[RMDB]
The record gives the reactivity of an RNA of 177 nucleotides to DMS and 2A3. High DMS reactivity at an A or C suggests that its Watson-Crick edge is free. The 2A3 profile rests on 8,302 reads. The RNA was probed in 150 mM KOAc, 10 mM MgCl2 and 150 mM bicine (pH 8.5) at 24 C. The DMS profile rests on 11,887 reads. It was measured as part of the RMDB library OK2TST.
RNA sequence: GGGAACGACUCGAGUAGAGUCGAAAAGAGAAGCGGCCGGCGCCAGCGGGCGUGCAGGCGUCUGGAGCGAGCGGCGCAGGCCAGCCUCAGGCGCCUCCUGCAUCCAGCAAAGGCGGCAGCAGCGGCGCAGCCGUAACCUAUUCGUAGGUUACGGCUGAAAAGAAACAACAACAACAAC
Reactivity to DMS in 0.01 (KOAc 150mM, MgCl2 10mM, bicine 150mM(pH8.5), 24C), signal-to-noise 7, nucleotides 027 to 126: g010a150g010a140a140g010c020g010g030c010c010g020g010c030g020c010c010a090g030c050g010g010g010c190g030u000g010c150a040g000g000c020g010u000c000u000g010g010a090g010c030g010a140g030c140g010g010c010g010c250a050g010g010c000c010a170g000c010c010u000c010a060g010g000c010g010c040c070u010c070c030u010g010c000a050u000c020c020a100g020c080a090a140a140g000g000c030g000g000c020a050g010c040a060g010c140g000g000c080g010
Reactivity to 2A3 in 0.01 (KOAc 150mM, MgCl2 10mM, bicine 150mM(pH8.5), 24C), signal-to-noise 3, nucleotides 027 to 126: g060a020g010a170a040g030c030g040g000c030c030g050g110c010g000c000c010a020g040c010g030g030g010c060g010u030g010c040a020g000g060c010g010u000c000u020g040g010a050g030c040g010a060g170c100g040g000c030g010c070a020g060g120c000c000a000g000c000c000u010c010a000g020g020c010g010c000c020u040c020c010u010g000c010a040u030c010c010a030g020c060a140a090a120g030g000c000g000g020c000a020g010c010a000g030c020g040g000c020g000